[RMDB]
RNA sequence: GGGAACGACUCGAGUAGAGUCGAAAAGAGUACAUAUGCCCAGCCUUACUGCAACGGCUGGAUGCUUCGUGCAAAUGCUAUGUACGCCUACGUAUAUGUGCGUAGAUGCCUAUAUUUUCUCUCCUGAGAAAAUAUAGAUGCAUACAAAGUUGAUGCACGUCCGCUAGUGAUUCGUCACUAGCGGACGAAAAGAAACAACAACAACAAC
Reactivity to 2A3 in 0.01 (KOAc 150mM, MgCl2 10mM, bicine 150mM(pH8.5), 24C), signal-to-noise 1, nucleotides 027 to 156: g070a000g020u060a010c040a020u000a030u290g010c000c000c020a000g000c000c000u220u270a290c280u300g080c210a300a070c050g000g030c000u000g060g000a000u060g020c020u130u130c070g120u070g000c000a020a000a250u110g000c000u000a000u020g020u000a000c000g050c000c020u040a050c020g040u110a090u020a050u230g110u000g100c010g050u040a000g030a110u010g030c010c000u030a000u000a000u000u000u000u000c000u020c000u020c030c300u190g000a000g000a000a000a000a000u000a000u000a000g000a060u060g000c000a000u010a050c040a000a150a090g020u000u060g040a060u060g030c050a020